[RMDB]
RNA sequence: GGGAACGACUCGAGUAGAGUCGAAAAUCGAAGAGUUGGCCCGUACGAUGGCCAACUUGACGUUCAAGCAGCGUCGGAACGCGAAUCCAGGCGGGCCACCGGCCAAGAAACGCAAGCCGGCUAAUCACGUCCUGAGUGUUUUCGAACACUCAGGACGAAAAGAAACAACAACAACAAC
Reactivity to DMS in 0.01 (KOAc 150mM, MgCl2 10mM, bicine 150mM(pH8.5), 24C), signal-to-noise 1, nucleotides 027 to 126: u000c030g050a230a140g000a000g020u000u000g000g000c000c000c170g010u000a080c300g000a180u000g070g010c020c030a030a030c000u000u000g030a300c050g020u000u000c180a130a160g000c070a160g030c030g010u010c030g030g000a100a080c250g000c050g000a110a180u010c020c000a150g000g090c050g000g000g000c060c230a050c070c000g000g050c040c060a050a110g000a050a130a100c020g000c060a090a070g020c020c000g000g000c120u040a050a050u020c120a070